This 207-nucleotide RNA was probed chemically with DMS and 2A3.
Conditions: 150 mM KOAc, 10 mM MgCl2 and 150 mM bicine (pH 8.5), 24 C.
DMS (dimethyl sulfate) methylates the pairing face of unpaired adenines and cytosines.
For 2A3, 1,274 sequencing reads were counted.
For DMS, 3,012 sequencing reads were counted.
RNA sequence: GGGAACGACUCGAGUAGAGUCGAAAACAUGGCUCAGUACAGCCUCGAUCUCCUGAGUAGCUGGGAUUAUAGGUGCGUGCCACCAUGCUUGGCUAAUUUUUGUAUUAUUUCUGUAGAGACAGGGUUUCAUCAUGUUGCCCAGGCUGGUCUCCAACUAAUGAUAUGGCAGUUUCGACUGCCAUAUCAUAAAAGAAACAACAACAACAAC
Reactivity to DMS in 0.01 (KOAc 150mM, MgCl2 10mM, bicine 150mM(pH8.5), 24C), signal-to-noise 1, nucleotides 027 to 156: c090a090u000g000g000c000u010c030a220g020u000a130c050a140g040c020c000u000c050g000a140u010c010u010c020c050u020g010a120g040u010a050g010c030u000g000g020g010a060u010u000a100u010a030g040g020u000g020c080g040u000g010c040c040a080c020c030a050u000g010c030u020u010g030g000c000u050a020a090u020u000u000u000u010g010u000a130u030u000a090u000u010u000c020u010g060u000a080g020a100g000a090c050a120g030g010g040u000u020u000c040a150u000c100a130u000g030u000u000g030c020c040c000a140g010g000c040u000g040g000u000c010u000c010c030a050a080c110u010a090
Reactivity to 2A3 in 0.01 (KOAc 150mM, MgCl2 10mM, bicine 150mM(pH8.5), 24C), signal-to-noise 2, nucleotides 027 to 156: c070a140u090g030g020c000u040c050a020g090u140a090c020a050g030c000c000u000c030g040a100u010c010u030c020c020u080g030a040g070u140a050g000c060u050g000g010g050a050u030u110a060u160a200g000g040u080g070c110g090u090g140c100c010a000c000c010a030u070g010c000u020u030g030g020c020u020a070a170u060u080u090u080u130g090u030a080u080u050a080u030u280u070c030u050g050u090a020g000a000g020a060c010a040g000g000g060u000u040u050c060a170u030c020a050u280g030u070u050g010c020c000c000a010g000g020c020u050g040g020u020c000u000c030c010a060a060c000u130a020